[RMDB]
RNA sequence: GGGAACGACUCGAGUAGAGUCGAAAAACAAGCCGAAGUCUUUGCUUAAAUGCGGAGAUUCAGAGACUAAACGAAGAUGGGGACGCCAAAAUAUAGGCGUCUUUUCUGAUAUAGUCCGACUUAUAGCUGGAAGGCUAUAACGUUUGUGUAGAUGCUCACAGAAUAACUACUUCGGUAGUUAUUCUGUAAAAGAAACAACAACAACAAC
Reactivity to 2A3 in 0.01 (KOAc 150mM, MgCl2 10mM, bicine 150mM(pH8.5), 24C), signal-to-noise 3, nucleotides 027 to 156: a000c020a030a020g060c030c040g100a060a020g050u010c000u100u010u030g030c010u070u120a110a120a150u270g000c000g020g010a010g000a000u040u050c030a030g080a000g000a070c010u040a040a170a010c070g080a070a000g020a030u150g130g010g010g050a000c000g000c010c020a040a050a130a000u300a040u100a200g010g000c000g000u000c000u010u000u000u000c000u000g010a000u020a010u020a070g010u000c010c030g010a010c010u010u000a000u010a010g020c020u020g080g110a110a050g050g000c000u000a010u000a010a000c050g000u000u060u080g040u030g090u120a040g040a240u170g060c040u040c010
Reactivity to DMS in 0.01 (KOAc 150mM, MgCl2 10mM, bicine 150mM(pH8.5), 24C), signal-to-noise 2, nucleotides 027 to 156: a040c050a060a050g050c010c030g000a070a110g010u000c000u000u000u000g010c020u010u010a060a110a130u000g030c000g030g000a040g000a120u000u010c050a070g010a210g020a050c010u000a030a070a150c110g000a160a050g010a060u010g010g010g020g010a030c010g040c020c010a050a080a090a240u000a250u000a100g020g030c000g010u000c000u000u010u000u000c000u000g010a220u000a150u000a030g000u000c020c000g010a070c010u000u000a010u000a010g020c010u000g020g020a220a220g010g020c000u000a000u000a020a000c120g000u000u000u000g030u000g000u000a140g010a210u010g000c030u000c050
The data come from the RNA Mapping Database (RMDB), library ARCHII. The record gives the reactivity of an RNA of 207 nucleotides to 2A3 and DMS. For DMS, 3,167 sequencing reads were counted. The reactions ran in a buffer of 150 mM KOAc, 10 mM MgCl2 and 150 mM bicine (pH 8.5), at 24 C. 2A3 adducts were read by reverse transcription with SuperScript II with manganese. For 2A3, 1,397 sequencing reads were counted.